RNA sequence: GGGAACGACUCGAGUAGAGUCGAAAACGCUCAGAGGCUAUCAGAGUACAUCACGACCGAACGCGUUCGCUUCGAUGCCAUGAAACUCUCGAAGAGGGGUAUAUGUGGUGAUGAAUUCUCAAUGUCAACGUGAUGAGCGCUUCGGCGCUCAUCACGUAAAAGAAACAACAACAACAAC
Reactivity to 2A3 in 0.01 (KOAc 150mM, MgCl2 10mM, bicine 150mM(pH8.5), 24C), signal-to-noise 1, nucleotides 027 to 126: c040g030c000u000c000a000g000a000g060g000c000u010a120u300c140a050g000a000g060u070a140c060a070u000c000a000c050g100a060c050c090g040a140a050c110g000c010g000u090u090c140g060c070u000u000c000g040a040u060g000c000c000a000u000g000a170a070a000c020u020c020u190c110g000a190a080g000a120g040g000g000g000u000a010u050a020u280g000u020g080g070u010g000a040u120g040a040a020u000u000c000u000c020a000a050u300g010u000c050a020

Conditions: 150 mM KOAc, 10 mM MgCl2 and 150 mM bicine (pH 8.5), 24 C. Structure probing data (2A3) for a 177-nucleotide construct. Reactivities are rounded to 0.1 and cut off at 0 and 3.